[RMDB]
RNA sequence: GGGAACGACUCGAGUAGAGUCGAAAACGGUCGUAGUGCUUAGCUGGCCUAUGAGUGGAUAUUGCUUGGUCGCUAUCAAUAAUUUAGUAAGGUCACGCGCUGUCGAGACAUUAUUAAUCGAGAGACCCAAGAACCCCUAUUUCGAUAGGGGUUCUUGAAAAGAAACAACAACAACAAC
Reactivity to DMS in 0.01 (KOAc 150mM, MgCl2 10mM, bicine 150mM(pH8.5), 24C), signal-to-noise 2, nucleotides 027 to 126: c050g010g010u010c020g040u000a050g010u010g020c020u020u000a120g030c180u020g010g000c010c020u000a010u000g030a060g020u000g000g000a140u010a060u000u000g010c060u000u000g010g020u000c040g010c050u010a110u000c060a080a120u000a080a060u010u000u000a020g000u000a010a010g020g010u000c000a040c030g010c010g040c270u000g000u000c020g010a070g020a040c020a030u000u010a020u010u000a030a050u000c150g010a120g020a130g030a080c040c020
Reactivity to 2A3 in 0.01 (KOAc 150mM, MgCl2 10mM, bicine 150mM(pH8.5), 24C), signal-to-noise 2, nucleotides 027 to 126: c030g040g060u020c020g010u060a040g040u060g170c040u060u100a000g110c110u160g000g040c000c010u020a050u110g040a040g190u090g070g040a070u030a070u260u170g010c070u020u000g030g000u050c000g000c000u070a030u130c010a040a170u110a090a080u090u100u020a040g020u030a050a020g000g030u020c020a000c050g000c040g040c070u100g090u220c000g000a020g020a030c020a000u000u110a010u090u080a080a030u050c020g000a000g000a000g020a140c100c030
The record gives the reactivity of an RNA of 177 nucleotides to DMS and 2A3. The reactions ran in a buffer of 150 mM KOAc, 10 mM MgCl2 and 150 mM bicine (pH 8.5), at 24 C. The 2A3 profile rests on 942 reads. The data come from the RNA Mapping Database (RMDB), library OK2TST.